[RMDB]
RNA sequence: GGGAACGACUCGAGUAGAGUCGAAAAAGUUAUUCGUAACUAUGUCCGAUAUGGACUCAUGGGAGAGGCAUGCGAGGGUUCUCGGAAACGAGAACCUCCCCACCGCAUGAACUACCUCGAACAUGAGUCCUAAGUCACUGUCAAGCUUCGGCUUGAACGGUAGUUGUGAAUUCGUUCACAACUACCGAAAAGAAACAACAACAACAAC
Reactivity to DMS in 0.01 (KOAc 150mM, MgCl2 10mM, bicine 150mM(pH8.5), 24C), signal-to-noise 2, nucleotides 027 to 156: a150g030u010u000a020u000u000c140g070u000a100a110c090u000a090u000g010u000c000c010g000a260u000a080u010g000g030a030c000u000c000a010u000g000g020g000a300g000a040g020g000c010a030u050g010c010g020a300g040g010g010u000u000c000u000c000g030g000a060a100a100c010g000a030g010a020a000c000c020u000c230c070c020c020a300c150c000g050c010a130u000g030a090a110c040u000a170c030c000u000c000g040a300a300c010a010u020g010a010g000u000c000c010u000a020a130g000u000c010a100c090u030g030u010c020a020a040g000c010u000u020c300g040g010c010u010u000g000a020a010
Reactivity to 2A3 in 0.01 (KOAc 150mM, MgCl2 10mM, bicine 150mM(pH8.5), 24C), signal-to-noise 4, nucleotides 027 to 156: a010g060u070u050a070u090u210c220g090u090a010a040c060u070a130u300g200u130c110c070g010a000u000a020u040g000g000a000c000u000c000a010u010g010g000g000a080g000a000g000g040c000a000u000g010c010g000a020g000g000g030u010u000c000u000c010g000g000a020a000a000c000g000a000g010a000a000c000c000u020c030c000c000c000a050c000c010g000c000a000u020g010a030a000c070u200a110c060c000u000c000g000a000a000c000a000u000g000a000g000u010c000c000u000a000a000g000u000c010a010c140u130g030u100c000a000a000g000c000u040u290c300g130g000c010u020u030g010a080a030

Structure probing data (DMS and 2A3) for a 207-nucleotide construct. For DMS the reverse transcriptase was MarathonRT. DMS (dimethyl sulfate) methylates the pairing face of unpaired adenines and cytosines. It was measured as part of the RMDB library RNAMAK. For 2A3, 3,267 sequencing reads were counted. The DMS profile rests on 1,846 reads.